[RMDB]
RNA sequence: GGGAACGACUCGAGUAGAGUCGAAAAACAAUCCGAAAGGAAAGGAUACUUUUCGGUCACUUCCAGAACUCACGACCCCAAGUUACAGUUGCAGUUGCAAAAUAUUCUGGCCAAGUGAGUGUUAAAAACUACCGGUAGCGUUCGCGCUACCGGUAGUAAAAGAAACAACAACAACAAC
Reactivity to DMS in 0.01 (KOAc 150mM, MgCl2 10mM, bicine 150mM(pH8.5), 24C), signal-to-noise 1, nucleotides 027 to 126: a080c300a150a020u040c040c010g070a000a010a060g090g010a110a170a160g000g000a210u070a010c000u020u020u020u020c000g070g000u000c050a010c110u000u000c040c000a180g080a050a000c110u020c010a000c000g000a090c260c180c020c000a000a080g050u000u000a040c160a050g000u020u010g000c000a130g010u020u000g030c000a010a040a040a030u020a120u000u000c010u000g000g010c220c050a030a120g040u000g000a030g000u000g000u010u020a040a080a070a080
Reactivity to 2A3 in 0.01 (KOAc 150mM, MgCl2 10mM, bicine 150mM(pH8.5), 24C), signal-to-noise 2, nucleotides 027 to 126: a000c040a000a000u060c000c000g010a050a030a040g070g010a140a070a050g170g020a160u250a200c020u000u030u030u020c010g050g000u030c000a010c080u020u000c000c000a030g060a130a060c000u050c050a010c010g100a120c000c000c000c000a100a000g020u020u060a070c030a060g010u020u010g040c010a140g000u300u240g120c000a030a000a000a030u140a080u070u080c010u000g000g040c010c080a080a020g000u060g020a000g010u000g020u110u150a000a060a040a000